Source information
Chemical mapping of a 207-nucleotide RNA with 2A3 and DMS. For DMS the reverse transcriptase was MarathonRT. Source: RMDB library OK3TST, as collected in RNAgym. The 2A3 profile rests on 1,173 reads. Values cover nucleotides 27 to 156. The RNA was probed in 150 mM KOAc, 10 mM MgCl2 and 150 mM bicine (pH 8.5) at 24 C.
[RMDB]
RNA sequence: GGGAACGACUCGAGUAGAGUCGAAAAGAAGAGUAUUGCUCAUGGUGCAUUCCUUAAGUAGACAUGACAGGAACCAACUGAAUUAAUGAUCACCAACAAAAGCCAGUGUUUGCAAUUUCAUCAAAGCAUAAGACAACUGUUCUUUUUCCUGGCUUUAUCGGCAAAAUUAUUUCGAUAAUUUUGCCGAAAAAGAAACAACAACAACAAC
Reactivity to 2A3 in 0.01 (KOAc 150mM, MgCl2 10mM, bicine 150mM(pH8.5), 24C), signal-to-noise 2, nucleotides 027 to 156: g020a040a010g030a010g020u090a040u070u110g040c020u020c040a060u060g040g000u020g020c030a050u030u140c020c000u100u040a130a050g020u130a030g060a120c040a050u060g060a020c020a050g040g020a040a040c030c030a030a060c020u080g040a110a070u070u120a090a030u050g050a100u080c000a020c090c040a050a060c000a050a210a020a000g040c020c020a030g060u060g040u100u070u080g030c030a100a100u020u210u180c070a100u080c040a120a030a030g000c010a030u070a090a040g050a030c040a060a040c100u070g120u070u070c000u060u070u000u030u020c000c020u000g010g010c010u000u010u000a040
Reactivity to DMS in 0.01 (KOAc 150mM, MgCl2 10mM, bicine 150mM(pH8.5), 24C), signal-to-noise 1, nucleotides 027 to 156: g010a160a080g000a120g000u000a060u000u000g000c060u000c070a180u010g010g000u000g000c050a250u000u000c030c050u000u000a030a140g010u000a100g010a130c140a090u000g020a150c040a160g020g000a150a080c060c030a040a300c030u000g020a070a090u000u020a080a040u000g000a110u000c020a040c060c020a000a160c020a050a060a060a050g020c080c050a050g040u000g000u000u000u010g000c010a040a090u000u000u000c100a040u000c040a020a030a050g000c000a110u000a080a180g020a070c020a060a030c030u010g000u000u000c070u020u000u000u000u000c020c000u000g050g020c000u000u000u000a050